[RMDB]
RNA sequence: GGGAACGACUCGAGUAGAGUCGAAAAUUCAUCACCUUGGCCAGGGUGGUCUCUAACUCCUGACCUCAAGUGAUCCACCCACCUCUACCUCCCAAAAUCCUGGGAUUAUAGGUGUGAGCCACUGAGCCAGUAACUUCCUGUUCGCAGGAAGUUACUGAAAAGAAACAACAACAACAAC
Reactivity to DMS in 0.01 (KOAc 150mM, MgCl2 10mM, bicine 150mM(pH8.5), 24C), signal-to-noise 3, nucleotides 027 to 126: u000u000c130a080u010c030a050c030c040u000u020g010g010c040c040a110g000g000g010u000g000g000u000c090u010c100u000a090a100c080u000c020c030u000g030a080c060c000u010c120a050a050g000u000g000a040u010c040c040a110c060c040c010a060c070c020u000c070u000a050c140c140u000c000c000c000a000a080a090a080u010c140c120u000g000g010g000a070u000u000a060u000a030g010g030u000g010u000g010a110g000c100c040a050c120u010g000a090g000c180
Reactivity to 2A3 in 0.01 (KOAc 150mM, MgCl2 10mM, bicine 150mM(pH8.5), 24C), signal-to-noise 1, nucleotides 027 to 126: u070u020c010a010u070c010a010c030c020u010u060g040g000c020c000a030g060g040g000u040g020g020u040c050u000c020u100a070a070c000u040c050c030u060g050a070c000c020u060c060a140a000g010u010g030a010u000c000c020a030c000c020c010a010c030c000u020c000u060a090c030c010u010c010c000c020a020a160a050a200u150c060c040u020g000g000g000a000u090u070a080u080a050g000g000u020g010u040g050a000g000c020c000a070c100u080g070a020g070c040